Structure probing data (2A3 and DMS) for a 207-nucleotide construct. Reactivities are given for positions 27 through 156. The 2A3 profile rests on 772 reads.
RNA sequence: GGGAACGACUCGAGUAGAGUCGAAAACUUCGGGUGUCCUUCCUCGCGCCCGCAGGACCACCCCUCGCCCCCUUUGCGCUGUCGCUUCGGCUACUACCCGGUGGAAACAACUGAAGCUCCCGAGAACCGCUUUUUCUCUAUCUUACUUGCUUCGGGGACAUGAAACAAUGUUCGCAUUGUUUCAUGUAAAAGAAACAACAACAACAAC
Reactivity to 2A3 in 0.01 (KOAc 150mM, MgCl2 10mM, bicine 150mM(pH8.5), 24C), signal-to-noise 1, nucleotides 027 to 156: c000u010u010c000g010g000g010u000g040u050c000c000u020u050c000c020u030c000g000c000g000c000c000c000g010c030a000g030g040a030c010c020a050c010c040c020c030u000c080g120c010c000c000c020c070u000u040u060g040c000g000c030u040g020u070c010g020c000u030u050c000g010g020c000u150a130c000u060a080c070c030c030g020g010u040g010g030a080a130a070c040a060a040c080u050g010a040a000g020c020u010c030c010c030g090a060g010a050a020c030c020g000c020u080u030u040u190u070c030u000c000u030a080u080c030u030u080a140c010u040u060g070c000u030u050c030g000g000g000g000
Reactivity to DMS in 0.01 (KOAc 150mM, MgCl2 10mM, bicine 150mM(pH8.5), 24C), signal-to-noise 1, nucleotides 027 to 156: c020u000u000c000g000g020g030u000g000u000c010c040u010u000c030c020u000c010g020c000g090c000c000c010g040c180a020g020g020a170c050c040a110c040c000c040c020u000c010g000c010c000c030c020c040u000u040u000g030c050g040c030u000g010u000c010g010c050u000u000c030g000g020c010u000a130c040u000a120c020c010c020g010g060u000g010g000a180a100a110c070a070a170c000u010g000a100a150g010c030u000c010c010c050g020a130g030a040a120c070c060g000c070u010u000u000u010u000c010u000c060u010a110u040c090u030u000a070c040u000u000g010c020u010u000c040g000g040g000g000